An RNA of 177 nucleotides, treated with 2A3 and DMS and read out base by base. Values cover nucleotides 27 to 126.
[RMDB]
RNA sequence: GGGAACGACUCGAGUAGAGUCGAAAAGAUAGAAAAGCUGGGUAAGACUCACCUGGCGACUCGUCGUCGAGGUCGACGAAGGGUCCUCAGCAGAGCACCGGCAGGAGGCGCUAUGCAGGAACGCUAGCAUAGGACUAUCGUUCGCGAUAGUCCUAUGAAAAGAAACAACAACAACAAC
Reactivity to 2A3 in 0.01 (KOAc 150mM, MgCl2 10mM, bicine 150mM(pH8.5), 24C), signal-to-noise 1, nucleotides 027 to 126: g030a030u210a000g140a040a150a010a020g030c050u060g010g020g000u020a010a040g030a060c000u010c010a040c010c000u000g020g000c000g000a000c000u000c000g010u010c000g010u000c010g000a080g160g300u300c020g020a000c000g000a000a020g000g000g000u000c010c010u000c000a000g010c100a040g000a000g030c010a020c030c000g020g000c020a000g030g000a030g030g000c040g000c060u050a030u240g020c010a010g160g000a080a020c050g000c020u010a000g000
Reactivity to DMS in 0.01 (KOAc 150mM, MgCl2 10mM, bicine 150mM(pH8.5), 24C), signal-to-noise 3, nucleotides 027 to 126: g000a160u000a100g010a140a060a110a150g020c010u000g000g000g000u010a040a040g020a190c010u000c010a090c300c000u000g010g010c300g000a010c000u000c010g010u000c000g000u000c010g000a220g020g010u000c010g020a000c010g000a020a020g030g010g000u000c010c010u000c030a010g020c200a230g000a020g030c010a110c000c000g000g020c010a050g020g010a070g000g000c040g000c020u000a030u010g020c020a050g010g010a080a090c090g000c010u000a030g000
For 2A3 the reverse transcriptase was SuperScript II with manganese.